[RMDB]
RNA sequence: GGGAACGACUCGAGUAGAGUCGAAAAAAGCUAAGUUUAGCUGAUCCAGAGGAUAGUGAUGCAAAUACUCUUUUUGCCGCAAUAAAACUCUAUGAUGAGUUGAAGAGAAGUGGAGAGUUUGAAGAUGCCGUGAAAUAACGUUCGCGUUAUUUCACGGAAAAGAAACAACAACAACAAC
Reactivity to DMS in 0.01 (KOAc 150mM, MgCl2 10mM, bicine 150mM(pH8.5), 24C), signal-to-noise 3, nucleotides 027 to 126: a080a010g010c010u010a050a210g020u010u000u000a020g020c020u000g000a110u010c030c090a100g000a100g010g010a090u000a050g010u000g010a110u000g010c050a050a060a050u010a100c030u000c030u000u010u010u010u000g040c040c040g020c070a090a040u010a080a060a020a040c000u000c000u000a120u020g020a170u000g020a030g010u000u000g010a070a130g010a090g010a040a100g000u010g000g000a050g000a080g010u000u010u010g020a090a090g000a130u000g010
Reactivity to 2A3 in 0.01 (KOAc 150mM, MgCl2 10mM, bicine 150mM(pH8.5), 24C), signal-to-noise 1, nucleotides 027 to 126: a000a000g100c070u150a130a070g030u170u120u020a020g000c000u070g030a040u000c020c020a040g070a050g120g060a020u050a180g030u030g080a060u070g000c000a000a010a070u060a100c050u020c000u160u000u040u000u100g030c010c010g000c010a010a010u080a090a120a020a000c000u000c000u050a170u290g150a090u210g020a020g000u040u040g050a030a020g070a020g030a160a000g050u070g030g020a050g020a030g000u000u090u150g050a110a040g010a060u180g020